[RMDB]
RNA sequence: GGGAACGACUCGAGUAGAGUCGAAAACGCCGUUUUUACGAUUCGUAAAUUUUCGAGUUGGACUCUUGAGGUUCUCAGCGUUUGCGACACUCCCAACCUUAUUUUACCUGUUCGCUGGAUCGUGCGGCAGCCGGGAAAGUUUCGACUUUCCCGGCUGAAAAGAAACAACAACAACAAC
Reactivity to 2A3 in 0.01 (KOAc 150mM, MgCl2 10mM, bicine 150mM(pH8.5), 24C), signal-to-noise 5, nucleotides 027 to 126: c150g080c060c100g050u010u010u010u030u090a120c030g010a050u000u050c030g070u190a040a110a290u170u160u040u030c020g000a010g030u010u010g040g000a020c030u020c030u070u140g050a040g000g050u040u020c070u000c030a050g010c020g060u050u070u090g060c030g020a000c000a000c040u020c020c000c020a030a040c000c030u080u120a160u100u150u080u080a090c010c010u030g060u080u050c020g020c050u050g020g020a060u050c030g050u080g030c000g000g010
Reactivity to DMS in 0.01 (KOAc 150mM, MgCl2 10mM, bicine 150mM(pH8.5), 24C), signal-to-noise 2, nucleotides 027 to 126: c060g000c090c110g000u000u000u000u000u000a040c000g000a020u010u020c020g040u000a060a040a150u050u010u030u030c070g000a030g000u000u020g010g000a270c050u010c010u040u020g000a050g010g010u000u000c010u000c000a150g000c040g040u010u000u000g030c020g020a080c170a030c090u020c000c000c000a070a130c100c040u040u010a000u040u040u020u020a120c010c040u000g000u020u010c020g000c040u000g020g000a050u000c060g020u000g010c050g000g000